An RNA of 207 nucleotides, treated with 2A3 and DMS and read out base by base. 2A3 adducts were read by reverse transcription with SuperScript II with manganese. The data come from the RNA Mapping Database (RMDB), library ARCHII. The RNA was probed in 150 mM KOAc, 10 mM MgCl2 and 150 mM bicine (pH 8.5) at 24 C. The 2A3 profile rests on 7,356 reads.

RNA sequence: GGGAACGACUCGAGUAGAGUCGAAAAUAAGGUUUGGGAGCUUAAAAAUUGGAAUUGGUGUUUUGAGAAGUAGAUGUGUUUGAGACUACCUCGAUCCAUAUCUUCGUUCAUCACUGCGAGUUUUUCGGAAGAGAGGCUUUUGGGGAUGGUAAGGAACGACUCUAAUGAAGUUCGCUUCAUUAGAGUCAAAAGAAACAACAACAACAAC
Reactivity to 2A3 in 0.01 (KOAc 150mM, MgCl2 10mM, bicine 150mM(pH8.5), 24C), signal-to-noise 6, nucleotides 027 to 156: u060a020a010g020g010u050u080u060g030g010g010a030g000c010u110u100a050a060a060a110a120u150u090g040g020a060a060u050u030g030g010u030g050u030u060u080u100g080a070g000a080a010g010u060a020g000a060u030g050u010g030u030u030u050g030a010g010a030c050u090a070c050c020u010c010g020a010u010c030c010a030u020a040u070c000u060u050c010g080u050u050c020a060u040c010a050c060u060g010c040g020a040g030u010u020u010u050u130c040g030g030a070a010g020a010g000a010g040g020c000u060u070u060u080g000g010g010g000a010u030g000g040u040a040a050g040g040a030a020c040
Reactivity to DMS in 0.01 (KOAc 150mM, MgCl2 10mM, bicine 150mM(pH8.5), 24C), signal-to-noise 2, nucleotides 027 to 156: u000a110a100g010g020u000u000u010g020g020g000a060g020c070u020u000a030a060a090a150a140u000u010g010g000a140a120u010u000g010g020u000g030u010u000u000u000g000a160g020a040a080g010u000a050g060a040u000g000u000g020u010u010u000g020a260g000a200c030u010a060c100c020u000c030g000a130u000c080c030a040u010a060u010c030u020u000c030g000u000u000c060a090u000c040a040c050u000g000c080g010a090g020u010u000u020u010u010c060g000g050a090a120g000a080g010a020g000g000c120u000u000u000u000g000g000g030g030a050u010g000g030u000a050a100g020g030a090a080c110